[RMDB]
RNA sequence: GGGAACGACUCGAGUAGAGUCGAAAAACAGGAAUUGCUGCAUCGAUCUCAGCAGGUCAGCAAGUCCAAGCAUGGAUUGCGACGAAGAUUGAGGCUGCAACCGCAAGCGCUGCACAUAUUGCUGCAUUGUGGGCAACUGGCGCUGGGUGGAUCAAAGUAUCUUAUGUGUUUUCGAACACAUAAGAUAAAAAGAAACAACAACAACAAC
Reactivity to DMS in 0.01 (KOAc 150mM, MgCl2 10mM, bicine 150mM(pH8.5), 24C), signal-to-noise 2, nucleotides 027 to 156: a100c040a130g030g000a100a120u000u000g030c010u000g000c040a070u000c020g010a050u010c030u000c030a080g030c050a150g040g000u000c020a140g010c020a030a040g010u000c010c000a100a210g010c150a130u000g010g010a210u000u000g000c000g000a110c010g000a070a060g010a100u000u000g030a090g010g030c000u010g000c040a050a060c000c020g020c040a050a130g000c050g020c010u000g010c040a040c060a140u010a100u010u000g020c040u000g000c040a120u000u010g000u000g020g010g030c010a090a060c000u000g010g020c050g040c010u000g010g010g040u000g020g000a170u010c050a040a080a140g000
Reactivity to 2A3 in 0.01 (KOAc 150mM, MgCl2 10mM, bicine 150mM(pH8.5), 24C), signal-to-noise 5, nucleotides 027 to 156: a000c050a020g070g090a100a140u070u040g000c010u040g000c020a020u030c020g050a050u020c030u030c040a140g060c040a060g090g160u020c030a030g000c020a040a010g120u000c000c010a060a020g210c060a170u100g010g010a020u000u050g020c020g010a020c020g030a050a040g030a040u000u060g020a010g030g000c010u050g010c040a040a070c000c010g010c050a030a010g020c040g000c120u110g040c060a040c040a050u240a070u090u200g020c030u060g010c030a090u090u100g040u100g030g010g030c010a040a040c050u050g010g020c020g000c040u020g020g050g020u090g040g000a020u070c080a020a030a070g060
The record gives the reactivity of an RNA of 207 nucleotides to DMS and 2A3. For 2A3 the reverse transcriptase was SuperScript II with manganese. As a SHAPE reagent, 2A3 marks flexible, mostly unpaired nucleotides at the ribose 2'-OH. Conditions: 150 mM KOAc, 10 mM MgCl2 and 150 mM bicine (pH 8.5), 24 C. For 2A3, 3,472 sequencing reads were counted.